[RMDB]
RNA sequence: GGGAACGACUCGAGUAGAGUCGAAAAGCAUCGGCAGAGCUUGACGAGUCGGCAGCCCGGGCGCUCAAGCACACGAUUGCGGCUCGUUUUCGACGGGAGUCCGAGCCGAUGGCGCGGCCGUCGACAAGCAACGCUUAAUGUUCGCAUUAAGCGUUGCAAAAGAAACAACAACAACAAC
Reactivity to 2A3 in 0.01 (KOAc 150mM, MgCl2 10mM, bicine 150mM(pH8.5), 24C), signal-to-noise 5, nucleotides 027 to 126: g030c010a040u040c030g040g010c070a040g020a040g110c010u050u060g030a030c000g010a030g130u050c020g050g060c030a050g030c020c040c000g000g020g010c050g000c020u110c100a070a030g020c020a040c010a010c080g100a090u030u190g010c000g010g000c000u020c040g040u060u030u080u080c030g020a040c010g000g010g070a130g120u000c020c020g000a010g000c010c010g150a150u170g020g010c040g000c010g030g020c000c000g020u020c000g000a020c000a060a040
Reactivity to DMS in 0.01 (KOAc 150mM, MgCl2 10mM, bicine 150mM(pH8.5), 24C), signal-to-noise 3, nucleotides 027 to 126: g000c020a050u000c050g000g030c080a070g000a120g050c000u000u010g020a020c000g020a070g020u010c000g030g000c120a050g000c050c050c110g000g010g000c020g020c110u030c100a080a170g000c020a080c020a100c090g000a170u020u010g000c010g020g070c000u010c030g000u040u010u020u000c010g010a000c040g030g010g000a190g010u030c050c000g000a110g000c020c000g000a110u030g020g000c030g040c050g010g000c010c000g000u010c010g000a030c250a100a050